[RMDB]
RNA sequence: GGGAACGACUCGAGUAGAGUCGAAAACUGACGCAACGUCUGCGCCAUCGCCCGCGGCGUGGUGGUGUCUCUCGGGUCGCCGGGAAUGGCGGUAUUCAGCGUAGGUUCAGUGCGAUCCAGACGAAACCACGGCAGAAACAUUCGUGUUUCUGCCGUGAAAAGAAACAACAACAACAAC
Reactivity to 2A3 in 0.01 (KOAc 150mM, MgCl2 10mM, bicine 150mM(pH8.5), 24C), signal-to-noise 1, nucleotides 027 to 126: c010u020g030a000c010g000c060a090a020c020g050u010c100u090g050c010g040c000c000a010u020c180g030c010c030c000g000c020g000g020c300g070u030g020g040u050g000g080u100g070u060c100u000c000u020c050g080g010g020u000c010g010c180c010g000g020g010a000a020u020g050g000c060g000g010u130a150u130u180c030a010g000c020g000u050a060g020g100u100u010c020a020g000u020g060c000g040a040u000c010c030a020g050a020c040g050a050a040a000c050
Reactivity to DMS in 0.01 (KOAc 150mM, MgCl2 10mM, bicine 150mM(pH8.5), 24C), signal-to-noise 2, nucleotides 027 to 126: c020u000g000a040c020g010c100a150a030c030g010u010c040u000g070c030g010c010c010a020u000c180g000c010c000c000g020c010g010g010c010g030u010g000g070u000g010g000u010g000u030c090u010c060u000c060g040g000g020u000c000g020c060c080g020g000g020a120a000u000g010g010c000g010g020u000a050u000u030c060a010g010c010g000u010a070g040g000u010u000c000a070g020u010g000c060g010a060u000c000c010a100g000a130c140g000a090a110a070c200